[RMDB]
RNA sequence: GGGAACGACUCGAGUAGAGUCGAAAACGCUGGGUCGUGUCAGCUAUGUAUAGGGAGCUGAAGCGCGCACGGCGAAGAACUAUACUAAGGCUGAACGACCUGUGCUGAAGCGCGCACGGCAACCGAAAGGUGCGAAGGAGGCAUUUCGAUGCCUCAACCUAGAACUAACUUUCGAGUUAGUUCUAGGAAAAGAAACAACAACAACAAC
Reactivity to 2A3 in 0.01 (KOAc 150mM, MgCl2 10mM, bicine 150mM(pH8.5), 24C), signal-to-noise 6, nucleotides 027 to 156: c070g010c030u090g000g010g000u000c000g010u070g300u050c000a000g000c020u110a060u270g010u000a000u000a000g010g000g000a030g000c000u040g030a220a070g040c020g010c000g000c010a020c020g010g000c000g030a050a010g010a000a000c000u000a000u010a040c040u110a300a300g200g000c000u010g000a000a000c000g000a000c000c000u010g000u020g000c040u090g040a130a040g010c000g000c010g000c010a000c040g020g000c050a070a090c020c000g050a070a030a040g000g000u030g010c020g040a080a070g160g010a010g000g000c000a000u050u160u090c160g050a020u010g000c000c000u000c010a010a020
Reactivity to DMS in 0.01 (KOAc 150mM, MgCl2 10mM, bicine 150mM(pH8.5), 24C), signal-to-noise 2, nucleotides 027 to 156: c040g040c040u000g010g000g040u000c000g000u000g020u000c020a010g040c000u010a080u010g010u000a020u000a050g000g020g000a100g020c000u000g010a050a080g020c000g050c040g000c020a300c040g030g020c000g010a090a170g030a090a220c050u000a020u000a020c020u010a120a110g000g000c000u020g010a090a030c010g010a020c000c000u010g030u010g040c020u010g010a110a050g020c040g030c010g000c020a240c050g000g020c020a070a120c030c060g000a110a150a180g020g010u000g000c030g010a110a100g010g000a070g010g020c010a050u000u030u010c270g020a060u010g040c000c010u000c010a010a100
Description:
This 207-nucleotide RNA was probed chemically with 2A3 and DMS. The data come from the RNA Mapping Database (RMDB), library RNAMAK. The 2A3 profile rests on 8,506 reads. For DMS, 3,711 sequencing reads were counted. DMS (dimethyl sulfate) methylates the pairing face of unpaired adenines and cytosines. For 2A3 the reverse transcriptase was SuperScript II with manganese. The reactions ran in a buffer of 150 mM KOAc, 10 mM MgCl2 and 150 mM bicine (pH 8.5), at 24 C.